[RMDB]
RNA sequence: GGGAACGACUCGAGUAGAGUCGAAAACGCUAGUUCGCUAGCGCGUCAGGGGUCGCACCGGGACCCAGCUUGGAUUUAUACACUGAAGCCUCCACGGUGUAUUGUCAGCUGCUAACUGGUGCGACGGAGGCACCCGGUCAACAGGCUUCGGCCUGAACAAACUAGUUGUAUUCGUACAACUAGUUUGAAAAGAAACAACAACAACAAC
Reactivity to DMS in 0.01 (KOAc 150mM, MgCl2 10mM, bicine 150mM(pH8.5), 24C), signal-to-noise 2, nucleotides 027 to 156: c000g000c010u000a000g030u000u020c300g060c020u010a000g010c050g000c030g000u000c070a190g010g000g030g010u000c010g000c040a090c020c030g020g020g000a210c240c220c000a020g000c030u000u000g090g010a090u000u000u000a030u000a020c000a010c000u000g010a080a120g000c020c010u000c020c050a300c010g000g010u030g010u000a020u000u000g000u000c000a060g010c020u000g000c030u000a050a300c000u000g000g000u000g010c000g020a040c030g000g010a090g030g010c050a190c010c000c020g040g010u000c040a070a160c050a030g030g000c020u000u000c260g040g000c000c000u000g000a070a260
Reactivity to 2A3 in 0.01 (KOAc 150mM, MgCl2 10mM, bicine 150mM(pH8.5), 24C), signal-to-noise 4, nucleotides 027 to 156: c010g000c000u010a000g040u090u060c240g030c170u000a010g010c010g020c010g070u040c060a120g050g000g080g000u010c000g000c000a000c000c000g010g000g010a010c000c010c000a000g000c020u070u200g170g000a070u280u290u090a010u070a010c010a010c010u040g130a230a080g090c050c060u070c060c050a040c030g010g000u010g010u000a010u000u020g000u010c000a000g020c010u000g010c010u030a070a020c000u000g000g000u000g010c000g000a000c000g000g010a000g000g000c020a050c010c010c010g000g060u150c070a110a110c000a060g010g030c010u110u190c300g120g000c010c010u000g000a030a030